[RMDB]
RNA sequence: GGGAACGACUCGAGUAGAGUCGAAAAGACAGGUCGCCGAACACGCCGAUGCCACCAUCAACGAUGUCGUGCUGGCCAUGUGCGGCGGGGCGUUACGUGCGUACCUGAUCAGCCGGGGAGCGUUACCAGGUAGUGUGUAAUUCGUUACACACUACCUAAAAGAAACAACAACAACAAC
Reactivity to DMS in 0.01 (KOAc 150mM, MgCl2 10mM, bicine 150mM(pH8.5), 24C), signal-to-noise 8, nucleotides 027 to 126: g000a060c010a020g010g000u000c020g010c010c000g000a090a120c290a030c050g010c010c010g000a200u000g020c010c030a060c050c010a040u000c100a080a100c120g010a160u010g020u010c080g020u000g020c110u000g010g010c130c150a040u000g010u000g020c030g000g010c010g010g000g010g010c020g010u000u000a220c030g010u020g000c010g020u010a020c010c000u000g000a070u000c030a120g000c020c010g000g000g000g000a030g010c000g000u000u000a040c020c030
Reactivity to 2A3 in 0.01 (KOAc 150mM, MgCl2 10mM, bicine 150mM(pH8.5), 24C), signal-to-noise 7, nucleotides 027 to 126: g030a010c010a010g000g010u010c000g000c010c010g010a060a020c080a000c030g020c010c010g060a080u070g020c040c020a040c030c000a020u060c030a040a190c090g200a170u240g100u290c070g050u070g050c060u050g040g050c050c050a090u120g080u110g030c050g000g000c020g010g030g000g000c020g000u030u070a080c040g060u180g050c000g020u080a040c000c000u030g000a250u020c010a010g040c010c010g000g000g000g000a020g000c010g010u030u030a040c010c000

This 177-nucleotide RNA was probed chemically with DMS and 2A3. The reactions ran in a buffer of 150 mM KOAc, 10 mM MgCl2 and 150 mM bicine (pH 8.5), at 24 C. Reactivities are given for positions 27 through 126. The DMS profile rests on 14,397 reads.